[RMDB]
RNA sequence: GGGAACGACUCGAGUAGAGUCGAAAAACUGCCAUACGUAGCAGAAACACGCCUUACCAGGACUAAACAGCGUGUCUAAAAAACAGUCCUUCAUACCUGAUCUGGAGGGUAGAUCAGGAAUACUAAAAAAAUCGGGUGAAGUUCGCUUCACCCGAAAGGAUUACUAGUCCUUCGGGACUAGUAAUCCAAAAGAAACAACAACAACAAC
Reactivity to 2A3 in 0.01 (KOAc 150mM, MgCl2 10mM, bicine 150mM(pH8.5), 24C), signal-to-noise 2, nucleotides 027 to 156: a030c010u030g000c020c000a130u110a220c060g070u070a010g040c010a010g010a020a060a000c000a010c000g000c010c000u000u010a020c010c040a010g000g000a000c000u050a150a000a000c020a010g010c000g000u000g010u060c080u020a000a010a000a000a030a020c030a010g000u010c020c000u050u030c050a100u110a220c000c000u000g010a000u030c000u010g030g070a070g050g050g030u030a000g000a000u010c040a000g000g050a000a000u040a020c030u100a050a060a060a060a000a020a140u080c000g000g030g000u000g010a000a020g000u010u120c100g040c140u000u010c010a000c060c010c000g000a000a000a000
Structure probing data (2A3) for a 207-nucleotide construct.